Description: An RNA of 177 nucleotides, treated with 2A3 and DMS and read out base by base. Conditions: 150 mM KOAc, 10 mM MgCl2 and 150 mM bicine (pH 8.5), 24 C. For DMS the reverse transcriptase was MarathonRT. 2A3 adducts were read by reverse transcription with SuperScript II with manganese.
RNA sequence: GGGAACGACUCGAGUAGAGUCGAAAAGAUAUGGAACCUUGACGCUUUUGACGAGCCCGUUUCGGAAACGAAACGGUGCUCGAUAAGCGUAAGGUUCCUAAGUCAAAUCGGCCCUUCGGGGCCGAAAGAAUACCUUAGUCUUCGGACUAAGGUAUUCAAAAGAAACAACAACAACAAC
Reactivity to 2A3 in 0.01 (KOAc 150mM, MgCl2 10mM, bicine 150mM(pH8.5), 24C), signal-to-noise 3, nucleotides 027 to 126: g000a010u030a010u090g010g010a010a020c010c010u000u050g220a130c030g030c070u220u140u210u300g300a300c150g000a000g010c040c000c010g000u000u010u010c000g010g020a040a030a040c000g000a010a020a000c000g000g000u010g020c000u000c000g000a000u000a000a000g020c000g010u000a000a000g020g000u000u000c010c000u000a000a000g000u010c010a000a060a180u060c020g000g000c000c000c000u010u050c300g020g000g010g000c000c010g000a010a010a000
Reactivity to DMS in 0.01 (KOAc 150mM, MgCl2 10mM, bicine 150mM(pH8.5), 24C), signal-to-noise 2, nucleotides 027 to 126: g000a020u000a260u010g000g000a000a010c000c000u000u010g040a030c000g030c000u000u000u000u010g000a260c160g000a000g010c010c010c000g020u000u000u000c010g000g010a060a040a110c000g010a000a010a000c000g000g010u000g000c000u000c000g000a020u010a010a020g010c010g030u000a010a010g000g010u000u000c000c000u000a000a070g000u010c020a100a150a190u000c000g040g000c000c010c010u000u000c210g030g020g000g030c000c000g000a010a020a100